[RMDB]
RNA sequence: GGGAACGACUCGAGUAGAGUCGAAAAUACUUAGUACGGGCGUAGUUGCAGGCAUUCCGGGUGCAGCAACUGACGCGGAAGACUUUUCCCAGAGUGUGCGCUUCAACUGGCGUGCUGAGUAGUGCACGAAUUGCACGUACGUUCGCGUACGUGCAAACUCCGCAAUUUAGUUCGCUAAAUUGCGGAGAAAAGAAACAACAACAACAAC
Reactivity to DMS in 0.01 (KOAc 150mM, MgCl2 10mM, bicine 150mM(pH8.5), 24C), signal-to-noise 1, nucleotides 027 to 156: u000a050c040u000u000a050g010u000a070c230g000g000g050c010g020u000a050g010u000u010g010c000a080g010g010c000a000u010u010c020c300g000g070g110u000g020c000a300g010c010a020a020c000u000g000a070c020g020c000g090g030a130a160g000a160c030u000u010u010u010c010c030c020a280g000a100g020u000g010u000g010c030g010c020u000u000c010a150a160c040u000g040g030c100g000u010g000c000u020g000a070g030u000a040g050u000g030c030a050c000g010a070a240u000u000g000c020a000c020g070u010a010c020g050u010u010c300g120c010g030u020a020c000g010u000g020c020a000a010a130
Reactivity to 2A3 in 0.01 (KOAc 150mM, MgCl2 10mM, bicine 150mM(pH8.5), 24C), signal-to-noise 2, nucleotides 027 to 156: u070a000c010u000u020a000g000u000a000c040g030g020g000c000g030u010a000g020u030u010g000c070a140g140g000c000a010u090u070c140c170g190g100g020u000g000c010a010g000c020a010a000c020u080g290a030c010g020c030g000g030a040a010g140a130c000u140u130u030u010c000c000c000a010g000a010g030u100g000u020g000c020g000c030u060u130c050a230a200c110u070g080g000c030g020u000g020c000u000g000a010g000u030a010g010u050g000c000a000c030g020a060a070u060u020g000c000a000c020g010u040a000c000g010u010u030c190g000c000g060u000a000c000g000u000g000c000a000a000a000
An RNA of 207 nucleotides, treated with DMS and 2A3 and read out base by base.
Conditions: 150 mM KOAc, 10 mM MgCl2 and 150 mM bicine (pH 8.5), 24 C.
Source: RMDB library M2RFOK, as collected in RNAgym.